[RMDB]
RNA sequence: GGGAACGACUCGAGUAGAGUCGAAAAGAUAUGGACGUAGAGAAUGCUACCCACCUCGUCCUUCGGAAACGAAGGUCGAGAGGCAUUGUAGUCCUAAGUCAAACUUGAGCCGUUCGCGGCUCAAGAACAAGUUUCCCAUCUUCGGAUGGGAAACUUGAAAAGAAACAACAACAACAAC
Reactivity to DMS in 0.01 (KOAc 150mM, MgCl2 10mM, bicine 150mM(pH8.5), 24C), signal-to-noise 1, nucleotides 027 to 126: g000a130u020a150u020g070g020a040c010g010u020a140g000a170g010a010a000u000g000c000u000a080c030c030c050a300c040c000u000c000g000u000c000c000u000u010c000g000g000a050a150a030c000g000a020a000g010g010u010c000g030a000g010a160g000g000c000a000u000u000g010u000a140g020u000c000c030u010a000a140g000u000c070a030a070a180c000u000u000g000a000g020c000c000g060u000u000c220g020c040g020g000c010u010c000a000a000g000a090a200
Chemical mapping of a 177-nucleotide RNA with DMS.
Values cover nucleotides 27 to 126.
For DMS the reverse transcriptase was MarathonRT.